Structure probing data (2A3 and DMS) for a 177-nucleotide construct. For DMS, 4,912 sequencing reads were counted. Reactivities are given for positions 27 through 126.
[RMDB]
RNA sequence: GGGAACGACUCGAGUAGAGUCGAAAAUAAGAGCAUGUACGAAUCACGAUAUGAGAGUUCCUGGUGAAUCCCGGGUACAAGGAAAGGUAUUAAUCUCCCACUGCGUUCCCUUGCACUAGGGAUAUAACUAACGUCAAUCAUUCGUGAUUGACGUUAGAAAAGAAACAACAACAACAAC
Reactivity to 2A3 in 0.01 (KOAc 150mM, MgCl2 10mM, bicine 150mM(pH8.5), 24C), signal-to-noise 3, nucleotides 027 to 126: u150a050a030g060a020g040c070a050u110g020u090a040c010g050a050a050u070c050a020c080g060a080u070a050u300g060a040g000a000g040u000u010c010c010u040g060g100u080g110a070a030u010c000c000c000g030g000g000u000a010c000a000a000g020g020a050a000a020g050g010u050a060u130u130a220a140u050c060u030c070c020c020a040c030u060g010c010g110u010u030c000c000c000u020u020g020c030a010c020u020a020g010g010g000a020u020a000u010a050a000
Reactivity to DMS in 0.01 (KOAc 150mM, MgCl2 10mM, bicine 150mM(pH8.5), 24C), signal-to-noise 4, nucleotides 027 to 126: u000a060a090g010a080g020c100a050u010g010u010a090c040g000a080a050u000c040a060c060g000a130u020a090u000g010a040g020a300g010u010u000c020c030u010g010g010u010g000a110a060u000c010c000c000g000g030g010u010a020c020a030a020g010g010a020a020a020g000g000u000a030u010u000a070a100u020c080u010c020c000c020a120c170u000g010c010g000u010u000c010c000c010u000u000g000c030a010c030u000a080g000g000g000a010u010a020u010a070a110